[RMDB]
RNA sequence: GGGAACGACUCGAGUAGAGUCGAAAACAUGGGAGAAAGAUGAAGGGGGGAAGACUCAGCCAGUCUAGUCCUUCCACAUUCUUCUGCCUGCUCUUCUCCUAGCCAUGCUGGCAGCUGAUCAGAUGGUGCCCACCCAGUCCACUGACUCAAAUGUUAACAGGUGCAAAAUGUUCGCAUUUUGCACCUGAAAAGAAACAACAACAACAAC
Reactivity to 2A3 in 0.01 (KOAc 150mM, MgCl2 10mM, bicine 150mM(pH8.5), 24C), signal-to-noise 1, nucleotides 027 to 156: c090a210u090g100g000g000a000g000a000a110a080g060a000u100g020a130a300g000g000g000g020g000g010a000a060g000a000c000u080c160a090g060c050c010a010g000u000c000u090a090g070u040c000c010u040u040c000c000a010c010a070u000u040c000u040u000c010u040g080c000c000u040g000c080u020c000u210u020c010u000c020c020u000a020g090c000c010a120u180g090c070u060g010g000c010a000g010c040u030g070a110u070c010a010g080a090u070g010g000u110g070c000c040c000a040c000c020c000a000g020u010c010c000a030c010u040g010a030c010u030c100a150a100a000u230g030u080u120a040a040

Chemical mapping of a 207-nucleotide RNA with 2A3. The reactions ran in a buffer of 150 mM KOAc, 10 mM MgCl2 and 150 mM bicine (pH 8.5), at 24 C. For 2A3, 444 sequencing reads were counted. The data come from the RNA Mapping Database (RMDB), library OK3TST. Reactivities are rounded to 0.1 and cut off at 0 and 3.